RNA sequence: GGGAACGACUCGAGUAGAGUCGAAAAGGACUGUCGAGCGUGCUGAGACGAUUGCUACAGAUAUUGGUGGGCAAGCAACUGCUGGCGGGCUUGACACCCGUGAUGAAAUUUCUGAUGCAGAUAUAUUGCUCAAUGCAACGAGUGUCGGGAUGGAUCCCUGUUGCAGAUUGUUCGCAAUCUGCAACAGAAAAGAAACAACAACAACAAC
Reactivity to 2A3 in 0.01 (KOAc 150mM, MgCl2 10mM, bicine 150mM(pH8.5), 24C), signal-to-noise 4, nucleotides 027 to 156: g060g020a050c040u050g020u060c020g000a010g030c250g200u030g030c030u090g030a050g010a110c040g070a100u010u050g010c030u020a110c010a050g130a210u140a160u300u180g100g020u080g040g050g010c040a050a010g020c000a040a060c070u090g010c010u020g040g000c000g030g010g000c000u030u020g000a020c000a020c010c010c020g050u050g030a170u040g040a030a080a070u070u120u080c050u070g050a070u070g030c000a010g040a060u040a040u060a040u280u070g020c010u040c100a080a090u220g000c030a050a030c040g040a050g060u050g030u060c020g040g000g010a020u060g040g010a080u080c030c000
Reactivity to DMS in 0.01 (KOAc 150mM, MgCl2 10mM, bicine 150mM(pH8.5), 24C), signal-to-noise 1, nucleotides 027 to 156: g030g030a040c030u000g050u000c050g010a050g020c000g000u010g030c020u000g000a100g000a050c030g010a090u010u000g000c040u010a120c040a200g020a180u000a060u000u000g040g020u020g000g050g040c090a040a000g040c020a130a060c020u000g030c010u010g020g000c020g010g070g020c010u000u000g010a110c140a040c010c000c040g070u000g020a090u000g010a050a090a180u000u010u000c070u010g020a070u010g010c030a020g000a130u000a200u000a080u000u000g050c020u000c150a080a050u010g020c010a050a010c060g040a150g040u000g000u020c030g030g000g020a160u000g000g000a140u000c050c010
This 207-nucleotide RNA was probed chemically with 2A3 and DMS. Conditions: 150 mM KOAc, 10 mM MgCl2 and 150 mM bicine (pH 8.5), 24 C. The data come from the RNA Mapping Database (RMDB), library OK3TST. For DMS, 1,857 sequencing reads were counted.